[RMDB]
Structure probing data (DMS and 2A3) for a 177-nucleotide construct. Source: RMDB library TTRDEL, as collected in RNAgym. For 2A3, 2,809 sequencing reads were counted. The reactions ran in a buffer of 150 mM KOAc, 10 mM MgCl2 and 150 mM bicine (pH 8.5), at 24 C. The DMS profile rests on 1,175 reads.

RNA sequence: GGGAACGACUCGAGUAGAGUCGAAAAGAUAUGGAUACAUGGGAGAGCAUAUUCGGAAACGAAUAAAGCUCAUCGAUCAUGACGUCCUAAGUCAAAAACUAUAGUGACGUUCGCGUCACUAUAGUAACGCUGGGUAAUAGUUCGCUAUUACCCAGCGAAAAGAAACAACAACAACAAC
Reactivity to DMS in 0.01 (KOAc 150mM, MgCl2 10mM, bicine 150mM(pH8.5), 24C), signal-to-noise 1, nucleotides 027 to 126: g000a000u000a020u000g000g000a010u000a140c000a000u000g000g000g010a000g030a040g020c020a150u000a000u000u000c000g060g000a000a000a000c010g020a010a010u000a020a180a120g010c000u000c000a220u000c260g000a070u010c010a000u000g020a080c140g010u000c000c000u000a020a060g000u000c010a070a040a030a130a040c010u000a010u000a010g020u000g010a020c010g000u000u000c270g000c000g000u000c000a010c000u000a000u000a020g000u000a050a050
Reactivity to 2A3 in 0.01 (KOAc 150mM, MgCl2 10mM, bicine 150mM(pH8.5), 24C), signal-to-noise 1, nucleotides 027 to 126: g010a000u000a000u040g010g000a010u000a020c010a010u000g000g010g010a060g000a000g030c010a000u020a030u070u000c000g000g030a030a000a000c010g010a000a010u050a060a120a020g020c000u010c010a020u160c000g000a010u010c020a020u000g300a300c150g010u000c000c010u000a020a000g000u030c000a050a000a130a050a030c000u010a010u000a000g020u000g010a030c010g040u050u050c300g000c000g180u000c000a010c000u000a010u010a000g000u020a040a030